[RMDB]
RNA sequence: GGGAACGACUCGAGUAGAGUCGAAAACCCUCUAAGAUUCGUCUUAGAGGGAAAAACCGUAGGCGUCAUACAUCAGCGAUGUGGUUCGAAAGAGCCAUUUCGCGACGACGUAUGAACGCCUAAACGGAAAAAACUAUUGAGCUUCGGCUCAAUAGAACGUAAGUCUGGGAUUCGUCCCAGACUUACGAAAAGAAACAACAACAACAAC
Reactivity to 2A3 in 0.01 (KOAc 150mM, MgCl2 10mM, bicine 150mM(pH8.5), 24C), signal-to-noise 1, nucleotides 027 to 156: c000c000c010u010c000u010a010a000g000a030u020u140c190g020u000c110u000u000a000g000a010g000g000g000a120a040a020a010a000c020c010g000u000a000g000g000c010g000u010c000a010u000a020c010a070u060c030a030g000c000g000a000u000g000u000g010g030u010u010c010g090a100a070a090g000a020g030c010c010a000u010u010u010c000g000c000g010a040c050g000a010c010g000u000a000u010g010a050a020c020g000c010c010u000a010a010a000c020g000g030a080a030a030a130a000a010c000u020a000u020u000g000a000g020c020u020u100c300g080g000c000u000c000a000a000u000a000g000a050a020
An RNA of 207 nucleotides, treated with 2A3 and read out base by base. It was measured as part of the RMDB library RNAMAK.